[RMDB]
RNA sequence: GGGAACGACUCGAGUAGAGUCGAAAACAAGAUUAAAUGAAGCAAACUAACUUCGAUUGUUGCGUUCUGCAUAGGAGUUAGGGAUUUUACAGAACGAUAAGCAUGUAGUGGUCAAUUCGUAAUUUGCCAAGGACGAGAGUUCAAUUCUCUCCACCUCGAAAGGCGAAAGGUUCGCCUUUCGCCUUUCAAAAGAAACAACAACAACAAC
Reactivity to DMS in 0.01 (KOAc 150mM, MgCl2 10mM, bicine 150mM(pH8.5), 24C), signal-to-noise 1, nucleotides 027 to 156: c050a080a110g000a110u000u000a110a090a090u000g000a060a060g000c020a150a160a190c030u010a030a010c000u000u000c010g000a170u010u020g010u010u000g000c010g020u000u010c040u020g000c080a110u010a200g090g030a050g000u000u000a070g010g000g050a180u000u020u000u000a070c020a040g050a060a090c020g000a080u020a020a070g020c020a070u000g000u020a040g000u010g010g020u000c030a020a050u000u000c070g000u000a080a150u000u010u020g020c040c020a010a060g010g020a080c070g000a010g010a040g020u010u020c170a070a220u000u000c000u000c020u000c010c060a190c020c060u000c090
Reactivity to 2A3 in 0.01 (KOAc 150mM, MgCl2 10mM, bicine 150mM(pH8.5), 24C), signal-to-noise 3, nucleotides 027 to 156: c020a020a030g080a040u080u160a090a110a110u210g030a050a010g030c040a080a020a040c000u010a000a000c000u040u050c040g150a240u160u300g040u070u130g030c030g030u090u030c020u080g000c010a010u110a120g000g010a040g000u010u010a010g000g000g010a020u130u150u070u130a020c000a000g020a000a010c000g020a060u010a150a000g040c060a010u090g000u050a020g000u050g000g000u110c040a000a030u050u040c090g050u120a080a170u070u110u110g090c040c030a070a030g000g020a000c030g010a000g000a000g020u080u160c040a050a000u160u020c000u000c000u010c010c020a050c000c040u030c020
Source information:
The record gives the reactivity of an RNA of 207 nucleotides to DMS and 2A3. For DMS, 1,516 sequencing reads were counted. Values cover nucleotides 27 to 156. For 2A3, 1,094 sequencing reads were counted.